The record gives the reactivity of an RNA of 207 nucleotides to DMS and 2A3.
The DMS profile rests on 2,347 reads.
Source: RMDB library OK3TST, as collected in RNAgym.
The RNA was probed in 150 mM KOAc, 10 mM MgCl2 and 150 mM bicine (pH 8.5) at 24 C.
For 2A3 the reverse transcriptase was SuperScript II with manganese.
RNA sequence: GGGAACGACUCGAGUAGAGUCGAAAAAAGACCUCGUAGCGUACGGGGACGCCACAGCGCGCUCCCGUGUGGCCAAUGCUUAUAAUUACACGUUGCACAAAAUCCUAAAGCAUUUUUCCCAACACGGCUUUACGUGGGUCGCGAUACACCGGGGCGCGAUUGACCAGUUGUUCGCAACUGGUCAAUCAAAAGAAACAACAACAACAAC
Reactivity to DMS in 0.01 (KOAc 150mM, MgCl2 10mM, bicine 150mM(pH8.5), 24C), signal-to-noise 1, nucleotides 027 to 156: a050a080g000a080c030c010u000c000g010u000a120g040c000g030u000a040c010g000g000g000g000a060c050g000c070c000a080c120a200g030c110g000c000g010c000u000c000c000c020g050u000g000u000g020g050c050c110a080a060u020g000c000u000u000a120u010a040a110u020u000a110c130a160c070g010u000u000g000c030a140c080a080a030a090a060u010c070c030u010a050a050a020g000c020a090u020u020u020u020u020c020c030c020a120a130c040a040c030g000g000c060u000u000u000a110c160g040u000g000g000g010u010c000g010c000g000a220u000a080c030a050c070c000g000g020g020g040c000g000c080
Reactivity to 2A3 in 0.01 (KOAc 150mM, MgCl2 10mM, bicine 150mM(pH8.5), 24C), signal-to-noise 2, nucleotides 027 to 156: a000a000g150a040c010c000u030c000g040u010a070g180c100g070u050a000c000g010g010g010g000a020c020g010c010c000a120c040a080g100c090g000c000g010c060u110c000c000c020g000u040g000u010g010g000c030c000a030a020u050g010c020u130u100a090u060a210a170u240u140a080c030a020c010g030u020u080g070c140a030c120a130a080a060a070u160c110c080u210a150a050a000g000c000a010u000u000u000u040u070c000c000c000a050a040c060a000c020g040g000c000u080u150u130a030c040g000u040g000g000g000u010c010g040c030g040a060u060a070c050a010c010c050g020g000g000g000c010g000c000